[RMDB]
RNA sequence: GGGAACGACUCGAGUAGAGUCGAAAAUGUUGCCGGGGAGAACGUCUACAUGGGAGGUGGCGACGUAGUCUACUCCCGCAAUCAGGGUAUUUAUUGAGAUUUGAGAAUUUGUACGACGGAGCUGAUGUGGAAUCACUACCUUCGGGUAGUGAUUCCAAAAAGAAACAACAACAACAAC
Reactivity to DMS in 0.01 (KOAc 150mM, MgCl2 10mM, bicine 150mM(pH8.5), 24C), signal-to-noise 1, nucleotides 027 to 126: u020g000u000u000g000c070c030g000g080g000g000a040g000a090a030c160g050u000c040u000a010c060a220u020g120g010g020a150g010g000u000g000g000c030g000a150c230g000u000a050g000u000c020u000a300c000u030c000c070c070g000c130a030a020u000c070a140g000g010g000u070a000u020u050u130a030u030u080g000a060g000a110u000u000u000g000a000g000a040a090u000u000u000g020u020a110c050g090a040c080g000g000a080g000c120u000g020a130u020g020